[RMDB]
RNA sequence: GGGAACGACUCGAGUAGAGUCGAAAAGCUUUUUUUUCGGAUUAGGCGUGGAGUCGAAAGUCACCCUCCUCGCAUCGCAAGUUCGUGCUUGCGACUUACACGUAGGGCGAGGGGUGGGCGAAAGUUGAAAACACGAUGUUGUUCGCAACAUCGUGAACAAUAGUGUCCGUUUCGACGGACACUAUUGAAAAGAAACAACAACAACAAC
Reactivity to DMS in 0.01 (KOAc 150mM, MgCl2 10mM, bicine 150mM(pH8.5), 24C), signal-to-noise 1, nucleotides 027 to 156: g020c050u000u000u000u000u000u010u000u010c060g000g000a120u010u000a120g010g020c030g010u000g010g000a080g000u010c010g020a090a050a070g030u010c010a000c000c010c000u010c000c000u000c010g000c060a160u000c010g050c000a000a020g010u000u000c270g040u000g020c010u010u060g030c000g000a060c010u000u000a170c110a080c130g010u000a050g010g020g010c010g020a030g000g000g000g000u000g010g020g010c050g020a080a050a120g010u000u010g000a040a040a100a130c020a020c000g020a010u000g000u000u000g000u000u010c210g070c050a030a010c000a000u000c000g010u000g000a030a090
Reactivity to 2A3 in 0.01 (KOAc 150mM, MgCl2 10mM, bicine 150mM(pH8.5), 24C), signal-to-noise 3, nucleotides 027 to 156: g010c040u060u020u040u020u000u000u020u060c100g040g020a080u080u060a130g030g010c070g010u070g030g040a040g070u030c030g050a060a020a000g030u040c010a070c050c010c010u030c000c000u010c010g000c010a030u030c000g000c000a020a000g000u180u300c140g170u300g100c000u000u010g000c000g010a010c000u060u060a050c080a010c120g160u120a100g020g080g010c020g000a000g030g040g000g010u150g000g030g000c040g040a100a060a030g020u020u040g060a070a050a000a010c000a000c020g010a010u000g010u000u000g030u050u050c220g050c090a000a000c010a000u010c000g000u000g000a020a020
This 207-nucleotide RNA was probed chemically with DMS and 2A3. For 2A3 the reverse transcriptase was SuperScript II with manganese. It was measured as part of the RMDB library M2RFPK.